Notes
Chemical mapping of a 207-nucleotide RNA with 2A3. Reactivities are given for positions 27 through 156.
RNA sequence: GGGAACGACUCGAGUAGAGUCGAAAAGACGGCAGUUCGGAACUAUAAGGACAACGAACAGAUCCCAUGUUGUCCUUAUAACUGGACUGAGUACAGUUAGUUGUAUAGCAUACUCAUGGGAUCUGUUGUAUGCUAUAUAGUUCUAACUGUACUGUCACCAUACCACGGACUUCGGUCCGUGGUAUGGAAAAGAAACAACAACAACAAC
Reactivity to 2A3 in 0.01 (KOAc 150mM, MgCl2 10mM, bicine 150mM(pH8.5), 24C), signal-to-noise 2, nucleotides 027 to 156: g000a010c010g000g040c000a010g000u010u020c010g020g040a140a100c050u000a010u000a010a010g020g000a030c000a030a010c040g200a050a010c010a080g020a010u030c000c010c060a070u210g010u000u010g020u000c000c030u000u000a000u000a000a010c000u000g020g010a000c000u010g040a010g040u030a030c000a000g000u010u000a020g010u060u220g020u040a010u020a020g010c020a010u030a040c000u000c090a060u110g000g020g000a010u030c000u010g010u000u060g010u010a000u000g000c000u000a000u010a000u000a050g050u030u000c000u010a010a000c000u000g010u010a030c010u020g020u000c010a020